[RMDB]
RNA sequence: GGGAACGACUCGAGUAGAGUCGAAAAUUUUGAGGCUCUUGGAGGCUAGUGUAGCCUUCUCACACAUGCGCUCAACUAUGUGUGGUAGCAGUCGUAGACUUUGAGCAUCGGUGGUAGCUAUACGGUCAGUGAAUAGGUCGUUCGCGACCUAUUCACUAAAAGAAACAACAACAACAAC
Reactivity to DMS in 0.01 (KOAc 150mM, MgCl2 10mM, bicine 150mM(pH8.5), 24C), signal-to-noise 2, nucleotides 027 to 126: u000u000u010u000g010a300g000g010c030u010c020u020u000g030g010a020g020g000c020u000a070g020u000g020u050a060g030c000c000u010u000c030u020c040a040c010a020c030a030u010g010c160g000c050u010c110a060a110c100u000a030u000g020u000g010u000g000g010u000a080g020c150a060g010u000c020g040u000a120g000a090c050u000u000u030g000a070g000c020a100u000c090g010g010u000g010g000u000a070g000c060u010a090u000a100c090g010g020u000c070
Reactivity to 2A3 in 0.01 (KOAc 150mM, MgCl2 10mM, bicine 150mM(pH8.5), 24C), signal-to-noise 1, nucleotides 027 to 126: u000u030u050u120g090a060g010g020c080u020c010u060u040g010g010a000g000g000c050u000a040g170u110g100u280a010g000c010c000u000u010c010u000c030a020c000a010c000a020u060g030c070g000c090u070c100a010a060c020u050a030u040g050u000g010u040g030g040u120a010g010c050a010g000u040c030g000u010a050g020a100c100u040u040u100g020a040g000c020a080u020c040g090g040u040g010g040u030a060g010c020u010a030u010a090c040g070g000u060c030